Structure probing data (DMS and 2A3) for a 207-nucleotide construct. The data come from the RNA Mapping Database (RMDB), library M2RFPK. For 2A3, 4,099 sequencing reads were counted.

RNA sequence: GGGAACGACUCGAGUAGAGUCGAAAAGACGCCUUUAGAAGAAGAGGCUAGGGGGUAUUCCGGUGUGGGAUACUUAGUAAUAUGCAACGCUAAUUGCAAAAGAUUGUAGGACGGAAUUUACAGUCUUUAGAGAUAAGCACGUUCGCGUGCUUAUCAACCUAAAGGAACUGUUCGCAGUUCCUUUAGGAAAAGAAACAACAACAACAAC
Reactivity to DMS in 0.01 (KOAc 150mM, MgCl2 10mM, bicine 150mM(pH8.5), 24C), signal-to-noise 2, nucleotides 027 to 156: g020a140c030g010c000c010u000u000u020a110g000a260a160g010a110a170g000a010g000g030c020u000a070g010g010g010g030g020u000a050u000u000c000c040g010g000u000g030u010g010g010g010a050u000a040c000u000u000a060g020u000a110a120u000a120u010g000c010a050a100c090g030c060u000a070a160u030u000g000c010a070a060a050a010g000a010u000u000g010u000a070g040g010a210c030g010g010a120a300u010u010u000a040c000a050g020u000c000u000u000u000a080g000a200g000a010u000a000a000g000c000a010c000g040u000u000c300g060c030g050u000g010c010u000u000a000u000c000a050a140
Reactivity to 2A3 in 0.01 (KOAc 150mM, MgCl2 10mM, bicine 150mM(pH8.5), 24C), signal-to-noise 4, nucleotides 027 to 156: g050a010c050g020c010c000u080u080u090a180g040a300a020g020a060a010g000a020g020g010c030u040a070g040g010g000g000g030u010a020u020u040c030c020g100g100u210g030u190g100g010g000a020u010a030c010u030u020a030g020u060a040a110u080a080u200g020c000a030a030c070g000c090u090a060a100u090u040g010c010a090a000a030a030g010a010u020u040g010u020a010g030g070a030c090g040g050a070a050u130u060u030a030c010a020g000u000c000u040u010u050a120g030a000g000a050u000a000a000g000c010a010c000g020u040u050c140g020c000g080u000g000c000u000u000a000u000c000a000a000